The record gives the reactivity of an RNA of 177 nucleotides to DMS and 2A3.
The RNA was probed in 150 mM KOAc, 10 mM MgCl2 and 150 mM bicine (pH 8.5) at 24 C.
Source: RMDB library OK2TST, as collected in RNAgym.
The DMS profile rests on 1,073 reads.
For 2A3 the reverse transcriptase was SuperScript II with manganese.
RNA sequence: GGGAACGACUCGAGUAGAGUCGAAAAGCUAAAAUCAAGUGAUGUAAAUAGAAACAUUUCAGAAGAAGAUGCCAUAUGUGCCAAACUUCAGUUGGGUCUAAACAAAGGUGAAUUUAGCAUUGAUUGCCGUAACUCCUCUGUUCGCAGAGGAGUUACGAAAAGAAACAACAACAACAAC
Reactivity to DMS in 0.01 (KOAc 150mM, MgCl2 10mM, bicine 150mM(pH8.5), 24C), signal-to-noise 2, nucleotides 027 to 126: g010c000u000a020a010a070a050u000c010a010a050g000u010g010a240u000g000u000a050a070a130u000a040g020a040a060a010c020a040u000u020u020c100a050g000a090a010g030a050a050g000a170u000g010c000c040a100u000a120u000g030u020g030c040c050a080a100a090c020u000u000c030a050g020u000u000g000g000g020u000c010u000a010a090a030c050a020a120a060g000g000u000g000a060a070u000u000u000a010g010c030a050u000u010g020a120u000u000g010c260
Reactivity to 2A3 in 0.01 (KOAc 150mM, MgCl2 10mM, bicine 150mM(pH8.5), 24C), signal-to-noise 2, nucleotides 027 to 126: g040c020u000a020a020a010a100u010c000a030a030g100u030g110a110u050g030u050a080a180a110u030a120g050a050a050a010c010a030u070u180u220c030a040g030a060a000g050a080a000g050a110u170g000c010c000a070u030a120u300g110u250g000c000c020a060a100a100c060u020u020c020a010g000u000u000g030g020g020u030c080u030a120a120a000c000a010a040a010g070g040u020g040a010a020u050u060u020a020g010c020a010u020u140g120a100u070u120g080c060